[RMDB]
RNA sequence: GGGAACGACUCGAGUAGAGUCGAAAAGAUAUGGACAGAGCUUUUGACGCUGAUGUAUCGGAAACGAUACUGCCAGCGAUAAGCUCGUCCUAAGUCAAACAGUGCUAAAGUUCGCUUUAGCACUGAAUCAAUAUGUAGUCUUCGGACUACAUAUUGAAAAAGAAACAACAACAACAAC
Reactivity to 2A3 in 0.01 (KOAc 150mM, MgCl2 10mM, bicine 150mM(pH8.5), 24C), signal-to-noise 9, nucleotides 027 to 126: g000a010u040a020u070g000g020a010c160a160g020a180g010c030u100u100u160u300g250a220c110g000c000u030g020a090u110g020u010a000u000c000g000g000a030a030a010c000g000a000u010a000c010u060g190c140c020a000g000c030g030a010u010a020a000g000c000u000c000g000u000c000c000u000a040a000g010u000c020a030a060a150c000a030g000u010g000c000u010a010a010a000g020u060u120c280g080c150u000u000u010a000g000c000a000c000u000g000a000a060
Reactivity to DMS in 0.01 (KOAc 150mM, MgCl2 10mM, bicine 150mM(pH8.5), 24C), signal-to-noise 9, nucleotides 027 to 126: g000a020u000a200u010g000g000a010c000a100g020a000g000c000u000u000u000u000g010a170c080g020c000u000g010a170u000g010u000a000u000c000g010g000a060a040a120c010g010a010u000a000c000u000g020c240c010a000g010c000g010a060u000a010a010g010c000u000c000g000u000c000c000u000a010a070g000u000c020a140a100a220c000a000g010u000g010c000u000a000a010a010g010u000u010c220g020c000u000u000u000a000g000c000a000c000u000g000a050a080
An RNA of 177 nucleotides, treated with 2A3 and DMS and read out base by base. For DMS, 30,988 sequencing reads were counted. It was measured as part of the RMDB library TTRDEL. The reactions ran in a buffer of 150 mM KOAc, 10 mM MgCl2 and 150 mM bicine (pH 8.5), at 24 C. For DMS the reverse transcriptase was MarathonRT. The 2A3 profile rests on 55,079 reads. As a SHAPE reagent, 2A3 marks flexible, mostly unpaired nucleotides at the ribose 2'-OH.